[RMDB]
RNA sequence: GGGAACGACUCGAGUAGAGUCGAAAAUUAAUCCGGCUUUAAGAUGACGAGGGCAGGGUUUAUCGAGACAUCGGCGGGUGCCCUGCGGUCUUCCUGCGACCGUUAGAGGACUGGUAAACCAAUUUAAGCCUUAUCUACUUUUCGAAGUAGAUAAGGCAAAAGAAACAACAACAACAAC
Reactivity to DMS in 0.01 (KOAc 150mM, MgCl2 10mM, bicine 150mM(pH8.5), 24C), signal-to-noise 4, nucleotides 027 to 126: u000u010a060a090u000c040c020g010g010c040u000u000u000a080a090g000a100u010g010a070c090g000a080g000g000g010c060a060g010g010g020u010u000u000a040u010c020g000a110g000a080c080a050u000c050g010g020c070g000g010g000u000g000c020c020c030u000g010c010g000g000u000c010u010u010c090c020u000g010c160g000a020c020c020g000u000u010a040g010a110g010g010a080c060u010g010g020u000a040a050a070c040c030a080a120u010u000u000a090a180
Reactivity to 2A3 in 0.01 (KOAc 150mM, MgCl2 10mM, bicine 150mM(pH8.5), 24C), signal-to-noise 2, nucleotides 027 to 126: u130u070a020a010u030c020c030g060g000c050u140u150u090a080a090g020a150u140g040a060c050g040a080g020g030g000c020a030g020g000g020u030u080u060a070u040c050g010a040g000a040c060a060u040c050g040g000c020g030g110g030u040g040c010c000c010u010g030c020g000g030u000c010u040u100c010c030u050g040c010g030a050c030c000g010u000u050a070g040a060g050g000a030c010u040g000g050u050a030a020a030c010c020a030a060u080u080u080a040a040